[RMDB]
RNA sequence: GGGAACGACUCGAGUAGAGUCGAAAACGCAAUGACGUAAGGUGGGACUUUUCCCUACAGUUCGAGCGGUCGAACUAGAGGGGAGUGUAACCUUGGUACCGCCGUAGAAACAGGGUUACGACGUCUUACCGAGAUUCCAACUCGGCCCCUCUCAGAGCAUUUAAACACCCUUCGGGGUGUUUAAAUGAAAAGAAACAACAACAACAAC
Reactivity to 2A3 in 0.01 (KOAc 150mM, MgCl2 10mM, bicine 150mM(pH8.5), 24C), signal-to-noise 2, nucleotides 027 to 156: c040g020c030a120a300u220g060a110c020g100u130a110a050g000g030u040g020g030g030a040c010u000u070u110u110c010c000c030u050a090c070a020g000u000u000c000g000a000g000c040g040g050u080c000g000a000a010c040u060a020g010a010g020g010g000g010a080g040u120g010u010a000a000c000c000u010u000g000g030u090a030c030c040g030c050c040g190u150a030g030a040a270a010c000a000g000g000g010u000u000a040c090g020a030c020g190u070c070u160u080a030c000c010g000a000g000a000u160u030c020c010a040a190c040u000c000g040g000c000c000c000c000u000c010u010c010a040g020a010g180
Reactivity to DMS in 0.01 (KOAc 150mM, MgCl2 10mM, bicine 150mM(pH8.5), 24C), signal-to-noise 1, nucleotides 027 to 156: c000g000c100a160a120u010g020a190c100g010u010a050a100g050g030u000g000g010g030a100c110u000u000u000u010c000c000c010u000a100c070a030g030u000u000c010g000a140g010c150g010g000u000c030g010a060a040c020u010a090g010a060g030g020g030g020a080g000u010g030u000a030a020c010c000u000u000g000g000u010a080c040c020g000c000c150g010u010a170g020a160a130a180c030a090g010g000g020u000u000a020c020g030a100c110g000u000c090u020u000a180c010c010g000a060g010a130u000u000c070c090a110a090c040u000c010g020g010c030c020c020c010u020c010u000c060a080g000a190g000
Conditions: 150 mM KOAc, 10 mM MgCl2 and 150 mM bicine (pH 8.5), 24 C. This 207-nucleotide RNA was probed chemically with 2A3 and DMS. It was measured as part of the RMDB library VIROID. For DMS, 2,379 sequencing reads were counted.